[RMDB]
An RNA of 177 nucleotides, treated with 2A3 and read out base by base. The RNA was probed in 150 mM KOAc, 10 mM MgCl2 and 150 mM bicine (pH 8.5) at 24 C.
RNA sequence: GGGAACGACUCGAGUAGAGUCGAAAAACUGAGUUCAGGAUAAAUUUCUAAAUUCAGGGUAUAAAAUGUCUAUAUCCACCAGGGCAUAUAUUUUUAUACCAUAUUUGGAAAGUUUACUUGGCAUAUAGAGUCGUAGUACAUUCGUGUACUACGACUCAAAAGAAACAACAACAACAAC
Reactivity to 2A3 in 0.01 (KOAc 150mM, MgCl2 10mM, bicine 150mM(pH8.5), 24C), signal-to-noise 2, nucleotides 027 to 126: a020c050u070g010a040g010u120u130c010a000g000g030a110u020a030a020a010u030u020u000c000u000a010a000a000u060u070c110a080g150g000g000u000a000u000a000a000a000a020u040g020u010c070u070a060u030a090u170c030c040a120c080c120a140g120g000g000c050a000u040a010u000a080u110u130u030u010u020a020u000a000c000c000a020u010a020u090u000u010g000g000a000a000a050g010u030u010u010a020c000u000u000g030g000c060a090u110a040u060a150